[RMDB]
RNA sequence: GGGAACGACUCGAGUAGAGUCGAAAACACAAGCACAGCGGCAGCAACAUAUGCACACCAAGAGUUUUAACAUAGCUCUCUGUCAGGGCAUAGUCGUCGCUGCGACUGACGGAGAUGGCUGACAACCAGUGGACGUAAUGUUCGCAUUACGUCCACUAAAAGAAACAACAACAACAAC
Reactivity to 2A3 in 0.01 (KOAc 150mM, MgCl2 10mM, bicine 150mM(pH8.5), 24C), signal-to-noise 4, nucleotides 027 to 126: c040a010c010a000a030g040c020a010c030a010g020c000g020g000c020a010g010c020a030a100c010a070u100a040u170g010c010a010c000a020c090c000a040a000g000a020g030u040u060u070u140a180a120c150a100u200a050g010c010u010c000u010c040u020g010u050c040a080g040g050g000c020a030u040a050g080u080c050g020u030c020g030c040u010g000c000g110a100c020u060g040a030c000g010g000a020g010a030u060g030g000c000u010g040a030c020a030a050c020c040
Reactivity to DMS in 0.01 (KOAc 150mM, MgCl2 10mM, bicine 150mM(pH8.5), 24C), signal-to-noise 2, nucleotides 027 to 126: c050a100c090a150a100g020c000a030c010a060g000c000g050g000c000a170g000c120a080a080c060a030u020a020u000g000c000a040c060a150c220c090a080a070g000a040g000u000u000u020u000a030a160c280a090u000a100g000c010u010c000u000c020u000g030u040c110a100g010g020g000c010a030u000a010g000u000c030g000u040c110g000c060u000g010c010g000a040c020u020g030a200c200g030g040a010g050a010u010g000g010c000u000g000a050c080a090a110c110c100

Structure probing data (2A3 and DMS) for a 177-nucleotide construct. 2A3 adducts were read by reverse transcription with SuperScript II with manganese. For DMS the reverse transcriptase was MarathonRT. Values cover nucleotides 27 to 126. For 2A3, 3,203 sequencing reads were counted.